[RMDB]
RNA sequence: GGGAACGACUCGAGUAGAGUCGAAAAAAACCACUUGGUUAAGGUGUAUGACUAUCAAGAAGAUGGUUCGGUACUUCUGACUUGUGAUGCAGAAGCCAAAAAUAUCACAUGGUUUAAAGAUGGGAAGAUGAUCGGCUUCCUAACUGAAGAUAAAAAACGCGUACAGUCUAUUCGUAGACUGUACGCGAAAAGAAACAACAACAACAAC
Reactivity to 2A3 in 0.01 (KOAc 150mM, MgCl2 10mM, bicine 150mM(pH8.5), 24C), signal-to-noise 1, nucleotides 027 to 156: a000a000a040c020c000a000c130u060u180g080g000u060u080a090a110g110g000u080g000u010a000u050g050a060c000u010a070u150c060a050a020g020a140a000g000a130u010g030g120u120u030c110g020g000u000a050c000u040u040c000u060g090a290c010u050u090g020u060g010a110u100g040c000a000g010a050a000g030c040c040a020a150a100a000a000u080a000u130c060a000c010a050u060g050g080u150u090u120a220a070a000g000a060u180g000g000g000a020a020g000a020u150g040a110u050c060g000g000c000u000u010c000c000u000a010a010c010u000g060a050a070g080a120u150a050a160a000a000a000a050